[RMDB]
RNA sequence: GGGAACGACUCGAGUAGAGUCGAAAAGAUAUGGAACAUCACAUCCUACGAAGAACGCUGUCGGAAACGACAGCGGGAGUAGGUGUGAGUGUUCCUAAGUCAAAACAGUGGUGUUCGCACCACUGAAUCAAAGGGUAGUGUUCGCACUACCCUUUGAAAAAGAAACAACAACAACAAC
Reactivity to 2A3 in 0.01 (KOAc 150mM, MgCl2 10mM, bicine 150mM(pH8.5), 24C), signal-to-noise 3, nucleotides 027 to 126: g020a000u080a030u220g000g000a020a000c000a020u030c010a030c000a050u300c010c010u030a030c020g300a300a090g000a080a000c010g010c010u010g020u000c000g040g000a100a070a070c000g010a000c000a010g010c010g030g000g000a020g030u000a000g000g000u000g000u000g010a010g010u010g020u000u000c000c000u000a020a000g030u000c060a020a030a150a190c010a000g000u000g010g020u030g040u140u170c300g050c080a000c010c000a010c000u010g000a030a180
Reactivity to DMS in 0.01 (KOAc 150mM, MgCl2 10mM, bicine 150mM(pH8.5), 24C), signal-to-noise 5, nucleotides 027 to 126: g010a040u010a300u010g000g020a010a000c010a070u000c010a010c000a010u010c000c010u010a010c000g010a140a210g000a120a220c000g010c000u010g010u000c000g000g000a120a100a230c000g000a010c000a010g020c000g000g000g010a020g010u000a000g010g020u000g010u000g010a030g030u000g030u000u000c000c020u000a010a110g010u000c030a090a110a140a180c010a010g010u000g010g020u000g030u000u010c300g010c010a010c000c010a000c000u010g010a080a100